Annotation
An RNA of 177 nucleotides, treated with 2A3 and read out base by base.

RNA sequence: GGGAACGACUCGAGUAGAGUCGAAAAAGAAUUCUUGUUUCAUGCUUCACGGAGACACUAGUGCUGAACCUCUGUACGGCGACGCAGCACACCCGACACAUCCUUGAGUCUCUUUUUCAGCGUCGGUCAGUGCAUCAGUCUUCGGACUGAUGCACUGAAAAGAAACAACAACAACAAC
Reactivity to 2A3 in 0.01 (KOAc 150mM, MgCl2 10mM, bicine 150mM(pH8.5), 24C), signal-to-noise 2, nucleotides 027 to 126: a000g040a040a090u090u010c040u010u100g040u050u050u050c060a020u150g070c030u070u010c110a010c090g080g000a090g020a020c020a040c130u100a050g040u050g190c010u000g010a060a060c040c000u000c070u040g040u060a050c080g010g010c000g010a010c020g000c030a010g040c000a000c000a010c060c000c000g040a010c000a000c000a080u020c020c000u010u080g030a040g070u050c040u060c000u030u020u000u010u050c020a020g030c030g040u020c010g040g000u000